[RMDB]
RNA sequence: GGGAACGACUCGAGUAGAGUCGAAAAUUUACGAGUUCUCAUUCCGUGCGACGGACUUUGUCGAGCUGCUCCGGCGGGGGCGAAACAGGAUCGAUGGCCGCGAAGAAGUGUUGAAUUGUUCCCGGCAUCUUCAAGUUGUAUUCGUACAACUUGAAGAAAAAGAAACAACAACAACAAC
Reactivity to DMS in 0.01 (KOAc 150mM, MgCl2 10mM, bicine 150mM(pH8.5), 24C), signal-to-noise 6, nucleotides 027 to 126: u010u020u010a100c110g010a110g010u010u000c010u000c050a140u010u010c030c020g020u010g010c050g010a100c060g000g010a060c120u000u010u010g020u010c030g010a110g010c050u010g010c050u000c030c040g010g010c080g010g010g000g000g020c020g000a050a070a090c130a070g010g000a080u010c030g010a070u020g010g000c030c030g000c070g010a100a080g010a070a080g020u020g000u000u000g000a050a100u000u020g000u000u000c010c000c000g010g020c200a120
Reactivity to 2A3 in 0.01 (KOAc 150mM, MgCl2 10mM, bicine 150mM(pH8.5), 24C), signal-to-noise 3, nucleotides 027 to 126: u110u090u090a100c120g060a040g060u060u020c020u000c040a050u080u030c000c020g080u090g100c040g040a050c020g080g050a040c010u050u060u120g030u040c030g020a020g020c040u030g000c000u020c020c020g100g000c060g030g040g010g000g000c010g020a000a030a040c040a040g080g000a050u050c020g020a020u040g060g000c000c000g000c030g020a040a060g010a040a010g020u010g000u140u080g020a050a100u060u080g000u020u000c000c000c000g020g010c010a040
Annotation:
The record gives the reactivity of an RNA of 177 nucleotides to DMS and 2A3. The data come from the RNA Mapping Database (RMDB), libraries RFM100 and RFMREP. DMS adducts were read by reverse transcription with MarathonRT. The reactions ran in a buffer of 150 mM KOAc, 10 mM MgCl2 and 150 mM bicine (pH 8.5), at 24 C.